This 177-nucleotide RNA was probed chemically with DMS and 2A3. The 2A3 profile rests on 961 reads. DMS adducts were read by reverse transcription with MarathonRT. The RNA was probed in 150 mM KOAc, 10 mM MgCl2 and 150 mM bicine (pH 8.5) at 24 C. For DMS, 682 sequencing reads were counted. The data come from the RNA Mapping Database (RMDB), library OK2TST.
[RMDB]
RNA sequence: GGGAACGACUCGAGUAGAGUCGAAAAACUCAUCAGGAAUAUGAAACUAGAAAGCCAGGUCGUUCUAGAUAAACUGUUAUCUCUAUCAACACCUAGUUUAGGGAUGAAUGUCAUUUCUCAACAAAUACAUCCGAUCGUAUUUCGAUACGAUCGGAUGAAAAGAAACAACAACAACAAC
Reactivity to DMS in 0.01 (KOAc 150mM, MgCl2 10mM, bicine 150mM(pH8.5), 24C), signal-to-noise 1, nucleotides 027 to 126: a030c070u000c010a030u010c020a120g000g000a110a040u000a100u000g000a160a050a120c020u000a060g010a200a110a030g020c090c040a000g000g000u000c040g030u010u000c040u000a050g000a030u020a080a020a180c140u000g010u000u000a000u000c030u000c030u000a050u020c040a070a060c080a110c130c130u000a050g060u000u000u000a030g020g020g010a010u010g030a060a070u000g010u000c070a060u000u000u000c000u000c080a110a080c220a060a090a060u000a120
Reactivity to 2A3 in 0.01 (KOAc 150mM, MgCl2 10mM, bicine 150mM(pH8.5), 24C), signal-to-noise 1, nucleotides 027 to 126: a000c050u040c010a050u000c020a050g000g130a040a030u150a030u250g090a130a060a070c030u020a100g070a050a090a020g060c040c050a020g010g090u050c000g040u070u000c000u010a040g020a050u090a010a090a010c040u050g000u130u030a030u000c000u000c010u030a080u130c010a020a100c040a060c070c040u040a040g000u000u000u060a070g000g040g050a030u050g020a050a070u070g040u050c020a020u010u020u060c030u020c020a030a160c000a020a040a040u190a070